RNA sequence: GGGAACGACUCGAGUAGAGUCGAAAACGGUCUGUUCCAUGAUGUGUGCGGUCCACCCGGUAAUACGGCUCAUCACGAAGAUCGGGGUAAAGGAGCCGAUAUCGAAUCCCAUCAAGUGGUAGGCGGGAGCCGAGGUGAUAUUCGUAUCACCUCGGCUAAAAGAAACAACAACAACAAC
Reactivity to 2A3 in 0.01 (KOAc 150mM, MgCl2 10mM, bicine 150mM(pH8.5), 24C), signal-to-noise 4, nucleotides 027 to 126: c030g000g020u060c030u140g050u120u070c010c020a080u160g010a080u040g140u040g040u050g060c000g000g030u050c010c010a040c000c030c000g020g000u170a160a110u210a160c020g050g000c000u000c040a120u080c040a020c090g060a020a110g020a060u110c060g010g010g020g040u110a170a110a120g130g020a030g050c030c010g050a020u010a050u070c040g020a040a010u020c000c000c000a010u040c060a050a070g050u060g030g050u040a080g080g000c080g000g040g050
Reactivity to DMS in 0.01 (KOAc 150mM, MgCl2 10mM, bicine 150mM(pH8.5), 24C), signal-to-noise 2, nucleotides 027 to 126: c130g000g000u000c020u040g000u000u000c020c030a060u030g000a070u020g000u000g000u080g000c010g020g080u000c040c020a120c080c030c000g010g000u030a050a110u020a090c050g000g000c040u010c020a050u010c030a100c080g080a200a130g040a060u030c090g000g030g010g030u010a050a110a150g000g010a080g010c070c050g000a010u010a040u010c050g000a140a090u020c000c000c010a110u040c090a080a120g000u000g000g000u000a010g000g010c040g000g010g040

This 177-nucleotide RNA was probed chemically with 2A3 and DMS. DMS adducts were read by reverse transcription with MarathonRT. The 2A3 profile rests on 1,788 reads. It was measured as part of the RMDB library OK1LIB.